[RMDB]
RNA sequence: GGGAACGACUCGAGUAGAGUCGAAAAGAUCCAUUACGUGGAUGUAAUCGCGUACGCCAGUACCAUCUUCGGUCGGAUAAUCGUUACCAAAAAUCGCCAGCGAGUCGCGACGGCCUACAGCAACCUGGAGUCUAAUCUUGUUCGCAAGAUUAGACUCAAAAGAAACAACAACAACAAC
Reactivity to DMS in 0.01 (KOAc 150mM, MgCl2 10mM, bicine 150mM(pH8.5), 24C), signal-to-noise 3, nucleotides 027 to 126: g010a060u000c000c000a080u010u020a070c130g020u000g010g010a040u010g010u010a040a210u010c130g030c070g000u000a060c140g000c060c090a070g020u000a080c030c020a090u000c060u000u000c040g020g000u000c130g030g010a050u010a090a080u000c050g010u000u000a070c050c040a020a050a060a080a080u000c080g000c030c020a060g010c030g010a070g000u000c040g010c040g000a120c030g000g000c020c010u010a080c090a070g010c060a080a080c050c110u010g000
Reactivity to 2A3 in 0.01 (KOAc 150mM, MgCl2 10mM, bicine 150mM(pH8.5), 24C), signal-to-noise 3, nucleotides 027 to 126: g060a030u040c020c000a030u080u200a080c150g030u040g040g010a030u050g080u240a090a090u140c050g010c040g060u040a030c040g040c050c030a020g020u020a040c020c020a060u040c050u110u060c040g020g010u020c030g000g030a040u090a050a070u120c040g030u020u050a090c040c000a020a050a000a060a070u100c090g020c030c000a020g020c020g070a030g060u050c000g020c020g040a020c040g050g010c010c000u030a040c040a040g030c010a020a050c010c020u060g090